[RMDB]
RNA sequence: GGGAACGACUCGAGUAGAGUCGAAAAUUUAUUGGGGAGUACACUCGAGGAGUGGAAGGCGGGGAGGGCGGGGAGGAGUGUUACCCUACGGGAACUGCUGAGUGCCCCUGACGUCCAGACCCUCCCCUAACGUCAUCCUUCGGGAUGACGAAAAGAAACAACAACAACAAC
Reactivity to DMS in 0.01 (KOAc 150mM, MgCl2 10mM, bicine 150mM(pH8.5), 24C), signal-to-noise 2, nucleotides 027 to 129: u090u050u020a000u100u010g070g000g000g000a070g000u020a260c100a000c100u000c080g000a140g040g000a040g000u060g020g040a000a000g020g040c150g000g100g000g010a060g020g000g100c080g000g060g000g000a010g000g040a150g060u050g020u040u050a090c040c010c020u020a150c100g050g020g000a040a060c020u000g000c100u000g010a110g060u020g000c030c010c000c140u000g030a090c160g000u060c000c070a120g030a140c080c040c000u030c000c050c000c040u110a000a050
Reactivity to 2A3 in 0.01 (KOAc 150mM, MgCl2 10mM, bicine 150mM(pH8.5), 24C), signal-to-noise 1, nucleotides 027 to 129: u110u150u060a170u040u090g000g000g000g000a000g030u090a070c010a000c060u030c040g100a080g050g020a020g000u080g040g040a020a000g000g000c060g020g020g000g020a010g010g000g010c080g000g000g000g000a080g000g020a110g030u000g050u090u080a130c010c010c000u000a030c060g000g000g000a030a030c000u070g020c050u030g110a030g050u130g000c000c000c000c020u020g000a020c040g040u000c000c000a040g000a060c000c000c000u000c000c030c000c010u000a000a020